[RMDB]
RNA sequence: GGGAACGACUCGAGUAGAGUCGAAAACAGAGGACCCCUUCAGCGAACAGAGGCGCUCGCACGGGAUAGGAGUAAGACCAUAGCGAUAGGGAGAGAUGCUAGGAGUUAGAGGAGACCGAAGCGAGGAAACCCGCCCUCUUCGGAGGGCGGAAAAGAAACAACAACAACAAC
Reactivity to 2A3 in 0.01 (KOAc 150mM, MgCl2 10mM, bicine 150mM(pH8.5), 24C), signal-to-noise 2, nucleotides 027 to 129: c080a010g120a060g060g000a070c000c000c030c000u010u060c030a030g000c000g040a040a040c000a040g070a020g030g000c030g030c040u020c010g010c000a050c100g010g000g000a000u050a030g020g030a030g000u070a070a020g000a010c010c000a060u100a000g030c080g070a060u080a080g000g000g010a020g010a000g000a020u090g000c030u060a000g000g040a020g010u050u080a030g000a080g080g000a010g020a010c000c000g010a000a000g010c020g020a030g080g000a060a000a000c030
Reactivity to DMS in 0.01 (KOAc 150mM, MgCl2 10mM, bicine 150mM(pH8.5), 24C), signal-to-noise 1, nucleotides 027 to 129: c100a030g000a020g020g020a150c070c020c050c010u010u080c100a100g100c020g010a090a030c210a200g010a100g010g050c080g000c000u000c040g050c170a080c120g000g040g060a090u050a060g010g060a060g040u050a150a090g000a050c000c060a170u000a200g030c040g030a020u070a230g070g000g000a030g020a020g000a040u010g050c050u000a040g000g000a020g040u000u040a090g010a070g010g040a180g030a060c050c020g000a140a100g050c040g000a000g010g020a090a000a060c070
Structure probing data (2A3 and DMS) for a 170-nucleotide construct.
High 2A3 reactivity points to a flexible backbone, as in loops and unpaired stretches.
Source: RMDB library 15KLIB, as collected in RNAgym.
For 2A3, 2,262 sequencing reads were counted.